[RMDB]
RNA sequence: GGGAACGACUCGAGUAGAGUCGAAAAGUAAAGGCCGAACGAGCGCUAAUGCGCAUGCUAGAAAAUGGUAGGCCAUCGUAGUGUGAGCAUGAGCACGAAAGAAACACACACAUGCACGUGCUAAAAACGAACCAUCUUGUUUCGACAAGAUGGUUCGAAAAGAAACAACAACAACAAC
Reactivity to 2A3 in 0.01 (KOAc 150mM, MgCl2 10mM, bicine 150mM(pH8.5), 24C), signal-to-noise 1, nucleotides 027 to 126: g070u120a100a000a060g010g020c020c000g000a060a040c060g030a040g050c060g020c040u160a300a170u200g000c000g030c050a040u050g010c010u070a010g090a040a140a010a080u080g100g000u070a010g050g000c010c000a010u030c020g020u030a060g010u030g010u000g070a030g000c060a090u020g050a020g000c040a030c140g040a060a060a100g040a040a100a000c070a020c000a000c010a010c010a060u000g030c050a010c060g000u050g070c080u150a120a030a000a040a040
Reactivity to DMS in 0.01 (KOAc 150mM, MgCl2 10mM, bicine 150mM(pH8.5), 24C), signal-to-noise 1, nucleotides 027 to 126: g020u000a080a070a080g020g010c020c030g000a030a170c300g000a250g000c030g010c020u000a040a160u000g000c000g000c000a000u040g010c050u020a000g000a180a030a070a110u010g030g000u020a120g000g080c000c000a100u000c160g000u000a040g010u000g000u010g000a020g020c040a040u000g000a120g030c000a020c010g000a010a040a090g000a070a060a010c070a110c250a080c050a040c070a020u000g030c050a050c030g000u030g000c040u000a060a040a000a030a030

This 177-nucleotide RNA was probed chemically with 2A3 and DMS.
The RNA was probed in 150 mM KOAc, 10 mM MgCl2 and 150 mM bicine (pH 8.5) at 24 C.
High DMS reactivity at an A or C suggests that its Watson-Crick edge is free.
DMS adducts were read by reverse transcription with MarathonRT.
For 2A3, 885 sequencing reads were counted.